[RMDB]
Structure probing data (2A3 and DMS) for a 207-nucleotide construct. The RNA was probed in 150 mM KOAc, 10 mM MgCl2 and 150 mM bicine (pH 8.5) at 24 C. For DMS the reverse transcriptase was MarathonRT. Reactivities are given for positions 27 through 156. For DMS, 1,830 sequencing reads were counted. 2A3 is a SHAPE reagent: it acylates the 2'-hydroxyl of flexible nucleotides of all four kinds. It was measured as part of the RMDB library OK3TST.
RNA sequence: GGGAACGACUCGAGUAGAGUCGAAAAAUAAAGAAGCUAGGAGAGAGCCUCCAUUAUGCUUUCCGCCAUGGCUACAUCAAACAAGCCUGUUCUAUUUCUAAUGUAGAGCUGACCAAUAUCAUUUCCUAUUUGGGCAUAUUGCAUGAAAAUCGCCUAGUAUAUCUGGGAAUUUCGAUUCCCAGAUAUAAAAAGAAACAACAACAACAAC
Reactivity to 2A3 in 0.01 (KOAc 150mM, MgCl2 10mM, bicine 150mM(pH8.5), 24C), signal-to-noise 2, nucleotides 027 to 156: a030u200a000a160a070g070a040a000g040c050u090a020g030g030a070g040a020g010a070g170c010c010u000c020c000a020u120u100a060u150g000c000u090u020u010c010c030g030c030c010a070u050g010g000c020u080a020c060a110u160c050a120a030a160c010a110a000g010c000c010u010g010u020u000c010u020a060u030u150u030c110u130a130a120u230g020u040a010g010a010g010c010u020g030a080c010c010a060a060u100a020u180c110a070u080u090u160c010c000u120a180u140u110u030g030g030g000c040a020u100a040u150u140g020c030a050u090g120a060a030a070a030u090c030g000c000c000u020a020g090
Reactivity to DMS in 0.01 (KOAc 150mM, MgCl2 10mM, bicine 150mM(pH8.5), 24C), signal-to-noise 1, nucleotides 027 to 156: a080u020a090a050a220g000a100a210g050c010u000a050g010g000a190g020a170g030a090g010c040c050u020c020c130a160u010u020a110u020g030c040u000u000u010c030c000g010c090c080a080u000g000g020c020u000a050c060a080u000c080a090a040a080c050a100a170g000c020c020u000g010u000u000c020u000a010u000u000u000c090u020a120a060u000g010u000a050g000a050g010c000u010g000a040c010c020a040a090u000a030u020c030a160u000u000u000c020c000u000a110u020u000u010g000g020g010c060a170u020a070u000u010g000c070a090u000g000a090a100a170a090u000c020g020c050c000u000a150g010